The record gives the reactivity of an RNA of 177 nucleotides to 2A3 and DMS.
2A3 adducts were read by reverse transcription with SuperScript II with manganese.
Conditions: 150 mM KOAc, 10 mM MgCl2 and 150 mM bicine (pH 8.5), 24 C.

RNA sequence: GGGAACGACUCGAGUAGAGUCGAAAAGAACCGCUGUGAGCGGAGUGAAAUAGAACCUGAAACCGUAUGUCUACAAAGUGUCAGAGCAGAGCAAUCUGCGAUGGCGUGCCUUUUGUUUAAUGAGUCUACCUUUGGAAAUGUUCGCAUUUCCAAAGGUAAAAGAAACAACAACAACAAC
Reactivity to 2A3 in 0.01 (KOAc 150mM, MgCl2 10mM, bicine 150mM(pH8.5), 24C), signal-to-noise 3, nucleotides 027 to 126: g030a040a030c000c010g030c010u090g140u160g230a050g000c020g060g000a090g050u090g090a010a040a030u160a060g040a010a000c040c000u040g030a120a010a020c020c000g050u110a050u180g100u030c010u060a030c050a050a040a030g040u050g000u060c000a010g000a010g020c010a000g000a000g050c000a020a130u010c000u000g010c000g010a000u000g000g000c010g020u030g060c010c020u090u140u030u040g020u000u060u060a140a140u200g060a030g050u010c020u030
Reactivity to DMS in 0.01 (KOAc 150mM, MgCl2 10mM, bicine 150mM(pH8.5), 24C), signal-to-noise 2, nucleotides 027 to 126: g020a270a160c050c020g020c030u000g010u010g010a110g040c020g030g040a090g000u020g010a070a100a100u030a030g020a130a140c040c050u000g000a110a050a080c050c090g010u030a040u000g000u000c020u000a030c030a060a040a040g020u000g010u000c010a020g020a300g010c000a020g000a000g000c280a060a090u000c000u030g000c010g000a100u000g000g000c030g040u000g010c120c050u000u000u000u010g000u000u010u050a140a080u080g000a040g000u000c040u000